[RMDB]
RNA sequence: GGGAACGACUCGAGUAGAGUCGAAAAAUGGUCUGAUAUUAUCUGUCUGUAUUUAUGGAGAGGAGCUUCAACACACUCACGAUUUAUGCUUAAUCUCACUUUUGACGGCAGGAUAAAUCUUAGUGUCCUACACAACAACCUUCUUGAAGACCAGUGACUAUCGUAUCCGAUUCGUCGGAUACGAUAGAAAAGAAACAACAACAACAAC
Reactivity to DMS in 0.01 (KOAc 150mM, MgCl2 10mM, bicine 150mM(pH8.5), 24C), signal-to-noise 3, nucleotides 027 to 156: a070u000g040g000u000c030u000g010a180u000a080u010u010a060u020c040u000g000u010c040u000g030u000a070u000u000u000a120u010g010g000a080g000a100g040g000a140g020c050u000u000c070a070a110c100a070c050a110c030u000c080a030c120g010a080u000u000u000a020u020g040c050u010u000a100a130u000c020u000c020a090c130u010u000u000u000g020a080c070g000g020c100a030g000g010a050u000a020a030a030u010c020u000u000a100g030u000g000u000c020c000u010a080c140a080c120a060a080c050a060a070c050c050u000u010c060u000u000g000a140a080g000a010c020c000a060g020u010g000a250
Reactivity to 2A3 in 0.01 (KOAc 150mM, MgCl2 10mM, bicine 150mM(pH8.5), 24C), signal-to-noise 6, nucleotides 027 to 156: a000u030g000g000u010c020u020g020a020u040a120u150u050a050u050c020u020g090u010c040u090g070u080a170u050u160u020a170u110g050g000a030g000a000g050g030a010g020c010u090u090c090a090a060c050a010c020a020c100u080c050a060c080g060a060u000u080u110a050u070g030c020u030u060a110a090u070c010u000c010a170c060u050u110u070u080g060a010c050g030g000c020a020g050g020a010u030a020a020a010u010c000u030u050a040g010u010g050u080c010c020u110a030c070a000c010a070a100c010a030a070c010c020u100u100c020u100u180g040a030a010g010a010c000c010a010g040u040g080a020
The record gives the reactivity of an RNA of 207 nucleotides to DMS and 2A3. The 2A3 profile rests on 3,927 reads. The DMS profile rests on 4,821 reads. For DMS the reverse transcriptase was MarathonRT. It was measured as part of the RMDB library OK3TST. For 2A3 the reverse transcriptase was SuperScript II with manganese.